[RMDB]
RNA sequence: GGGAACGACUCGAGUAGAGUCGAAAACGAGCCACAGAUCGGCGUGGAAGGCUGGACUUCCGGCACCCUGGCCACUAUCGAUCAGGCCGGGGGUCGUGUUUUGCGUAAUACUCCGGCUCGGCCCUGCUACGGAUCGUACGCCGCGCCCACGAAUCGCGGCUUCAUAGACAUUCGUGUCUAUGAAGCCAAAAGAAACAACAACAACAAC
Reactivity to 2A3 in 0.01 (KOAc 150mM, MgCl2 10mM, bicine 150mM(pH8.5), 24C), signal-to-noise 4, nucleotides 027 to 156: c010g010a010g020c010c010a060c040a070g050a140u140c070g040g020c030g010u040g050g030a080a070g100g000c040u050g020g050a080c030u090u030c100c000g010g010c060a300c020c000c010u020g000g010c030c000a100c070u200a170u300c080g150a120u130c120a100g000g010c000c010g000g000g000g010g010u000c010g000u030g020u050u040u070u090g050c020g000u070a050a060u050a200c060u000c050c020g010g000c010u010c010g020g000c000c020c000u010g050c020u090a070c050g060g000a050u050c050g020u020a020c050g000c010c000g000c010g000c020c020c000a100c030g070a060a060u170c090g010c030
Reactivity to DMS in 0.01 (KOAc 150mM, MgCl2 10mM, bicine 150mM(pH8.5), 24C), signal-to-noise 1, nucleotides 027 to 156: c010g000a060g020c010c020a150c110a070g010a070u000c050g010g040c070g000u000g020g010a100a080g010g060c060u000g020g000a210c080u010u000c030c030g000g000c010a080c040c010c020u010g030g040c020c000a240c120u020a270u000c080g000a090u030c050a080g040g010c050c000g080g030g010g000g020u000c030g000u000g020u070u000u000u000g040c020g000u020a090a130u000a080c010u000c050c060g020g060c060u000c000g040g010c010c010c020u030g030c010u050a080c020g020g000a060u010c080g030u010a040c140g000c000c020g000c030g030c020c010c010a140c100g000a060a150u000c080g070c300